[RMDB]
RNA sequence: GGGAACGACUCGAGUAGAGUCGAAAACAAGGGCAGGAAAGGCAAACAGACAAGUGCGAGCAAGAUUCUACUGUCAUGGGCUAGAGGUCCCUUCGGGUCGGUGGCGACACCCCCAAGGCAGCCCCUCCAGGCAUCGAACCAGUGAAUCCCCUGUGGAGUACUCGUAUCCACCUGAUGCAGACUCACACGGGCUAACGAUCGGCAUGACAGAAGGUGGUGUAUGCCCUUCGCUCAGCAAGGCGGUGUGGUCUCCACACCGAUGGCAAACUUCAACGUUCGCGUUGAAGAAAAGAAACAACAACAACAAC
Reactivity to 2A3 in 0.01 (KOAc 150mM, MgCl2 10mM, bicine 150mM(pH8.5), 24C), signal-to-noise 6, nucleotides 027 to 266: c050a020a060g020g010g000c030a040g040g120a100a050a030g060g010c040a030a110a050c060a050g180a050c070a170a080g060u050g070c030g020a040g010c040a040a050g020a070u110u080c040u150a070c010u020g020u030c020a040u060g010g060g050c010u030a010g010a020g020g050u100c020c000c010u020u040c140g030g000g040u200c140g010g000u010g010g020c030g030a010c000a000c010c010c020c020c010a000a010g020g000c090a040g020c040c030c000c010u020c010c010a110g040g010c010a050u070c090g030a050a060c050c010a040g000u020g080a040a070u070c020c020c000c020u040g010u030g050g040a030g010u090a230c040u070c160g010u030a040u020c020c040a120c080c140u170g000a020u050g010c020a010g010a020c010u010c020a120c000a010c090g020g020g000c030u100a060a020c030g040a030u050c040g040g020c030a010u020g020a050c000a040g080a060a040g050g040u090g040g040u060g020u040a070u100g020c010c000c020u020u020c030g020c020u050c020a040g040c050a080a040g150g030c000g010g020u010g000u020g010g050u120c060u060c160c000a010c010a010c000c010g020a030u060g040g000c020a070a030a020
Reactivity to DMS in 0.01 (KOAc 150mM, MgCl2 10mM, bicine 150mM(pH8.5), 24C), signal-to-noise 7, nucleotides 027 to 266: c110a120a100g000g000g010c010a060g010g010a060a070a110g010g000c040a040a100a120c100a090g010a100c130a100a110g000u000g020c080g010a120g010c060a120a110g000a080u010u010c040u020a080c020u000g010u010c030a040u000g000g010g020c040u010a120g010a040g000g000u000c090c020c020u010u010c170g020g010g010u020c160g030g010u000g000g000c260g000a220c020a020c010c020c010c010c020a030a030g000g000c200a130g010c220c160c010c010u000c020c080a070g010g020c030a100u010c060g000a060a090c160c050a120g010u010g000a100a150u010c030c060c020c060u000g000u000g010g010a060g010u000a060c030u010c140g020u000a050u010c010c230a100c160c110u020g010a050u000g010c020a050g000a050c030u000c010a040c040a040c220g000g000g000c090u000a100a040c090g000a050u000c080g010g000c020a020u000g010a060c070a040g000a120a040g010g010u010g010g000u000g000u010a060u010g000c010c000c010u000u000c060g010c030u000c050a120g000c090a080a080g010g020c020g000g000u010g020u000g000g010u040c100u020c010c000a010c000a020c010c000g000a020u020g010g020c070a080a070a170
Chemical mapping of a 307-nucleotide RNA with 2A3 and DMS. For 2A3 the reverse transcriptase was SuperScript II with manganese. Source: RMDB library POS240, as collected in RNAgym. The RNA was probed in 150 mM KOAc, 10 mM MgCl2 and 150 mM bicine (pH 8.5) at 24 C. In probing experiments dimethyl sulfate is read out at A N1 and C N3, which are open when not base-paired. The 2A3 profile rests on 8,466 reads.